[RMDB]
The record gives the reactivity of an RNA of 177 nucleotides to DMS and 2A3. For DMS, 1,386 sequencing reads were counted. The RNA was probed in 150 mM KOAc, 10 mM MgCl2 and 150 mM bicine (pH 8.5) at 24 C. Values cover nucleotides 27 to 126.
RNA sequence: GGGAACGACUCGAGUAGAGUCGAAAAGAUAUGGAUCGUCGUCCAACGCGUUGAAAUCGGAAACGAUGGAGCGUGGGACGAGCGAUCCUAAGUCAAAUCUCUGUCGCUGUUCGCAGCGACAGAGAAACAAUGCUCAGUCGUUCGCGACUGAGCAUUGAAAAGAAACAACAACAACAAC
Reactivity to DMS in 0.01 (KOAc 150mM, MgCl2 10mM, bicine 150mM(pH8.5), 24C), signal-to-noise 1, nucleotides 027 to 126: g000a030u000a300u000g000g020a000u000c000g020u000c000g020u000c000c000a070a030c000g030c010g030u000u010g000a110a060a010u000c020g000g000a120a100a180c000g010a040u000g000g020a130g000c000g050u000g000g030g000a000c000g000a060g020c000g020a000u000c000c000u000a010a090g010u000c020a100a110a120u020c000u010c000u020g020u000c020g020c000u000g000u000u010c230g020c000a020g030c000g010a000c000a000g000a000g000a000a070a170
Reactivity to 2A3 in 0.01 (KOAc 150mM, MgCl2 10mM, bicine 150mM(pH8.5), 24C), signal-to-noise 1, nucleotides 027 to 126: g020a010u090a010u130g000g020a000u000c000g040u010c010g020u000c050c000a060a010c030g020c000g270u300u060g050a070a060a000u000c040g010g030a050a010a080c020g000a010u020g080g040a030g000c010g000u040g000g070g000a010c030g010a000g050c000g030a010u010c010c000u000a070a010g020u000c010a250a110a080u040c000u000c000u000g010u000c020g000c000u030g050u080u110c300g010c220a000g020c010g000a010c000a000g000a000g000a000a000a000